[RMDB]
RNA sequence: GGGAACGACUCGAGUAGAGUCGAAAACUCGUUCACGGUUAUGUCUGUCUCUGGCAGAGCAGACUGUCAGGAGGAUGAGGUCACCAUCUUCACGAAGCCAAAGCCAAAUUCCGCCUUGUCCUGUAAAAUUAGGAGUCCAGUUCGCUGGACUCCUAAUAAAAGAAACAACAACAACAAC
Reactivity to DMS in 0.01 (KOAc 150mM, MgCl2 10mM, bicine 150mM(pH8.5), 24C), signal-to-noise 2, nucleotides 027 to 126: c000u000c020g000u060u000c100a130c040g000g050u000u030a090u050g000u000c000u020g000u020c000u000c000u000g050g000c080a080g000a070g000c120a040g000a040c000u000g000u030c070a140g010g000a160g000g000a050u000g000a080g040g000u020c030a030c000c030a040u010c050u000u000c000a110c050g030a030a150g000c070c040a160a080a100g020c040c040a030a130a050u020u050c000c020g000c090c010u000u000g000u000c000c030u020g080u000a020a030a110
Reactivity to 2A3 in 0.01 (KOAc 150mM, MgCl2 10mM, bicine 150mM(pH8.5), 24C), signal-to-noise 1, nucleotides 027 to 126: c010u030c010g210u110u040c120a100c070g000g040u050u150a040u120g060u010c000u040g080u010c030u020c000u040g030g000c030a010g020a020g060c000a020g010a030c010u000g020u000c010a020g000g060a010g000g000a020u020g040a010g050g020u040c000a030c080c000a010u040c000u100u000c010a060c110g010a010a050g000c000c020a110a060a000g000c000c000a010a020a010u090u000c020c010g000c000c010u000u060g080u000c040c010u050g030u130a230a070a030